[RMDB]
Source: RMDB library RNAMAK, as collected in RNAgym. The record gives the reactivity of an RNA of 207 nucleotides to DMS. DMS adducts were read by reverse transcription with MarathonRT.

RNA sequence: GGGAACGACUCGAGUAGAGUCGAAAAGGGGUCUUGAGGUGGACUUUAAUGCGAGUCAACUCAGACAUGCUUGCAUACGCUGAAGCCUCCACGGCGUAUGAGCAACAGCUGAGUUGACUCGCAUUAAAGUCGUAACAUCCUCAAGACGGAGGCACCCGACUACUGUUAUGUUCGCAUAACAGUAGUCAAAAGAAACAACAACAACAAC
Reactivity to DMS in 0.01 (KOAc 150mM, MgCl2 10mM, bicine 150mM(pH8.5), 24C), signal-to-noise 1, nucleotides 027 to 156: g000g030g040g010u000c000u000u020g000a020g030g010u000g000g000a020c000u010u000u000a000a020u000g020c000g040a030g010u000c000a000a030c000u010c020a030g020a120c110a160u000g010c020u010u000g040c040a040u000a020c000g020c010u010g000a040a130g020c020c040u000c010c050a300c040g010g000c000g020u010a000u010g040a030g000c020a110a140c070a070g020c020u000g000a060g020u010u000g000a020c010u010c000g000c000a000u000u000a010a010a000g030u000c010g040u010a050a080c060a090u000c010c000u000c010a000a000g010a020c020g000g040a050g030g030c010a220c040c010c020
Description
Reactivities are given for positions 27 through 156. The reactions ran in a buffer of 150 mM KOAc, 10 mM MgCl2 and 150 mM bicine (pH 8.5), at 24 C.